[RMDB]
RNA sequence: GGGAACGACUCGAGUAGAGUCGAAAAUUACAUGACUGGGACUCAGCUGGGAUAACCAGGUCCUUCUUCAUGCACCUCAAAAAGGCUAGCCUGGGCUUUUCCCAUGGUGACAGUGUUCCAAGUGAACCAAAGCAGCAGGUUUCGACCUGCUGCUUUGAAAAGAAACAACAACAACAAC
Reactivity to DMS in 0.01 (KOAc 150mM, MgCl2 10mM, bicine 150mM(pH8.5), 24C), signal-to-noise 3, nucleotides 027 to 126: u000u040a130c190a050u020g010a000c170u000g050g020g000a010c030u000c090a220g030c110u040g000g000g000a110u000a010a050c000c000a010g000g030u000c010c020u000u000c060u000u020c240a020u030g000c040a070c010c030u020c280a000a040a060a060a010g000g010c300u010a010g000c030c000u000g000g000g040c300u100u000u090u000c000c030c000a000u040g000g000u000g000a110c200a030g000u010g000u000u010c000c000a010a040g000u060g000a130a020c100
Reactivity to 2A3 in 0.01 (KOAc 150mM, MgCl2 10mM, bicine 150mM(pH8.5), 24C), signal-to-noise 2, nucleotides 027 to 126: u150u050a010c030a040u090g030a050c000u000g030g000g000a000c000u020c030a060g050c060u050g010g000g020a060u030a080a020c020c000a030g110g140u300c040c000u090u100c070u050u070c070a130u100g150c060a150c000c040u200c040a100a030a000a000a000g070g020c030u000a020g050c000c000u000g000g030g080c060u000u050u080u010c000c000c000a040u090g050g000u040g000a020c090a090g040u050g040u140u070c010c010a180a070g050u090g060a040a050c000
This 177-nucleotide RNA was probed chemically with DMS and 2A3. For 2A3 the reverse transcriptase was SuperScript II with manganese. It was measured as part of the RMDB library OK1LIB. The DMS profile rests on 1,718 reads. For DMS the reverse transcriptase was MarathonRT. The reactions ran in a buffer of 150 mM KOAc, 10 mM MgCl2 and 150 mM bicine (pH 8.5), at 24 C.